[RMDB]
RNA sequence: GGGAACGACUCGAGUAGAGUCGAAAAACAAAUAACGCGAAGAAGCAGAGGAAAAACUGCAAGAACGCGAAACCACCAACGUCAAAAACACCAGAAAGGAGCUGAGAAAGACGAACCACCAAAAAAAGUUGAUAAUGAGAUUCGUCUCAUUAUCAACAAAAGAAACAACAACAACAAC
Reactivity to 2A3 in 0.01 (KOAc 150mM, MgCl2 10mM, bicine 150mM(pH8.5), 24C), signal-to-noise 2, nucleotides 027 to 126: a000c020a030a120a020u120a070a050c020g000c020g010a300a070g040a070a020g030c010a010g020a100g110g120a030a090a080a040a050c020u020g010c040a030a090g030a070a050c010g000c000g070a050a000a000c000c020a010c010c050a080a020c010g020u030c030a020a010a020a070a070c010a040c030c010a030g110a040a120a040g070g020a060g030c050u120g030a020g040a140a070a010g020a030c020g010a000a010c000c020a030c010c030a110a110a000a000a000a010a040
Reactivity to DMS in 0.01 (KOAc 150mM, MgCl2 10mM, bicine 150mM(pH8.5), 24C), signal-to-noise 1, nucleotides 027 to 126: a080c060a100a060a040u000a060a220c070g010c010g030a050a070g010a100a270g000c010a050g020a100g030g010a180a100a090a070a100c000u000g000c020a060a070g000a180a030c000g000c030g000a070a070a290c040c020a060c100c030a050a130c100g000u000c060a000a020a040a060a100c110a040c040c030a040g000a090a090a100g000g010a040g010c020u010g050a050g010a090a050a060g000a010c030g000a090a100c100c000a070c060c050a000a000a040a070a050a020a090